[RMDB]
RNA sequence: GGGAACGACUCGAGUAGAGUCGAAAAGAUAUGGAUCAUGGGUGGCUAGAAGGUCAUCGGAAACGAUGACACUUCUUGGACCCACCAUGAUCCUAAGUCAAAAGCAGUGGAGUUCGCUCCACUGCAACUGGUGGUUAUACUUCGGUAUAACCACCAGAAAAGAAACAACAACAACAAC
Reactivity to DMS in 0.01 (KOAc 150mM, MgCl2 10mM, bicine 150mM(pH8.5), 24C), signal-to-noise 3, nucleotides 027 to 126: g020a020u000a300u020g000g000a010u000c000a020u000g020g000g010u000g020g020c100u010a050g010a010a000g010g000u000c010a010u010c020g020g000a080a050a120c010g020a010u000g000a010c020a110c000u000u000c010u000u010g030g010a170c270c000c010a010c000c010a010u010g000a000u000c000c000u000a000a060g000u010c010a110a110a190a180g020c000a010g040u010g000g000a030g040u000u020c300g010c000u000c000c000a010c000u000g000c010a010a050
Reactivity to 2A3 in 0.01 (KOAc 150mM, MgCl2 10mM, bicine 150mM(pH8.5), 24C), signal-to-noise 2, nucleotides 027 to 126: g000a000u070a020u060g000g000a000u000c010a000u040g270g140g050u140g020g000c070u060a070g000a000a000g010g000u010c000a000u000c010g010g020a070a050a000c010g020a000u020g000a010c040a090c060u000u000c010u010u050g290g120a060c000c010c000a000c000c000a000u000g000a000u000c000c000u010a040a010g000u000c030a100a020a030a140g000c000a000g010u010g010g000a000g000u090u160c220g150c140u010c000c000a000c000u000g000c000a000a000